[RMDB]
RNA sequence: GGGAACGACUCGAGUAGAGUCGAAAAAUUCGUGGGCUUGACGAGGUGACAAUAGAUGGCCAUGCCUUGAACAUUGCAAGGGGCAAGCGUGAGGGCCUUACAAGCGACAAAACUAACAUGGGGAAGCGUGAGUACCGUGAGCUUCAAGCAGCCUAUGGACGUUGAUUCAAUUCGUUGAAUCAACGUCAAAAGAAACAACAACAACAAC
Reactivity to 2A3 in 0.01 (KOAc 150mM, MgCl2 10mM, bicine 150mM(pH8.5), 24C), signal-to-noise 3, nucleotides 027 to 156: a000u210u170c050g000u050g000g020g010c070u060u040g010a060c060g060a040g020g000u050g020a020c020a070a060u100a150g110a160u100g040g010c060c040a080u100g020c040c010u030u020g010a100a030c070a140u080u250g040c040a040a060g020g000g020g000c040a040a040g000c000g000u010g040a030g060g070g000c000c030u010u010a030c070a050a000g060c000g020a050c080a040a130a010a000c050u200a010a020c010a120u170g010g000g000g000a060a010g010c010g030u030g010a020g010u000a050c010c010g020u030g080a020g000c000u090u080c010a060a010g030c000a010g000c020c000u100a090u090g070
Reactivity to DMS in 0.01 (KOAc 150mM, MgCl2 10mM, bicine 150mM(pH8.5), 24C), signal-to-noise 1, nucleotides 027 to 156: a170u000u000c040g020u000g000g000g000c000u000u000g060a210c070g000a040g050g000u000g030a040c070a130a150u000a070g000a040u000g000g010c000c000a260u010g020c000c000u040u000g000a110a110c030a160u000u000g040c100a090a220g010g010g020g070c000a070a110g000c060g010u000g000a080g010g000g040c010c060u010u000a040c110a060a140g000c050g000a160c070a080a070a120a220c100u000a040a180c110a040u000g030g000g010g000a000a170g020c000g030u000g030a060g000u000a100c040c050g010u020g000a140g010c060u000u000c040a040a160g070c060a070g040c010c000u000a120u010g040
Description
Chemical mapping of a 207-nucleotide RNA with 2A3 and DMS. It was measured as part of the RMDB library OK3TST. DMS adducts were read by reverse transcription with MarathonRT.